Structure probing data (2A3) for a 207-nucleotide construct.
RNA sequence: GGGAACGACUCGAGUAGAGUCGAAAAAGCGAUGGUACGUCAUCGCAACGAUUGCCUGAUCGUAAAACAGGAGACGGCCGUGGCCGCGACCACGUAAAAAAGCGUAACGUGGUCUACGGACCACGAAAAAAGCGCGGAACGUUCGCGUUCCGCGCAAGUUUUAUGUAGUCUUCGGACUACAUAAAACAAAAGAAACAACAACAACAAC
Reactivity to 2A3 in 0.01 (KOAc 150mM, MgCl2 10mM, bicine 150mM(pH8.5), 24C), signal-to-noise 2, nucleotides 027 to 156: a000g000c010g000a000u020g020g070u260a090c080g050u070c080a010u000c000g000c010a000a010c010g010a000u000u040g030c000c000u040g010a020u000c020g120u170a020a000a010a020c000a010g030g010a020g110a030c100g100g040c050c000g000u000g000g010c020c000g000c010g000a000c000c000a010c030g000u020a000a090a000a020a040a020g080c030g050u020a030a000c000g000u000g000g000u020c010u050a060c110g030g020a090c000c000a000c000g030a000a000a000a000a000a000g010c000g000c020g000g000a000a000c010g010u050u060c190g000c020g110u000u000c000c000g000c000g000c000a010a010
It was measured as part of the RMDB library M2RFPK.